[RMDB]
RNA sequence: GGGAACGACUCGAGUAGAGUCGAAAAGAUAUGGAACCCACCCAGCUUUUGACGCCUUAGUGUCGGAAACGACAUGGGAGGCGAUAAGCUGGUGGGUUCCUAAGUCAAACUAGAGUUCGCUCUAGAACGCGGAAUAAGAGUUCGCUCUUAUUCCGCGAAAAGAAACAACAACAACAAC
Reactivity to DMS in 0.01 (KOAc 150mM, MgCl2 10mM, bicine 150mM(pH8.5), 24C), signal-to-noise 1, nucleotides 027 to 126: g010a010u030a300u000g000g030a000a000c000c000c000a000c180c050c050a030g000c000u000u000u000u000g020a300c060g000c010c000u000u000a300g020u000g000u010c000g000g000a080a080a300c000g000a020c000a000u000g020g000g000a020g050g000c010g000a040u000a000a000g000c020u000g000g040u020g010g000g020u000u000c000c000u000a040a150g010u000c040a200a040a240c010u000a040g010a040g050u000u010c230g020c000u000c000u040a020g030a060a140
Reactivity to 2A3 in 0.01 (KOAc 150mM, MgCl2 10mM, bicine 150mM(pH8.5), 24C), signal-to-noise 1, nucleotides 027 to 126: g020a030u070a070u100g000g000a010a000c000c000c000a030c030c150c040a000g020c030u090u140u300u290g300a150c000g030c010c010u000u020a000g000u000g000u010c010g000g000a060a070a000c030g000a020c010a040u040g190g300g000a020g010g000c000g020a020u020a010a010g010c000u000g000g000u010g010g000g000u000u000c000c010u040a000a000g000u000c000a000a070a150c030u010a000g010a000g000u080u050c220g010c140u040c010u000a010g000a210a060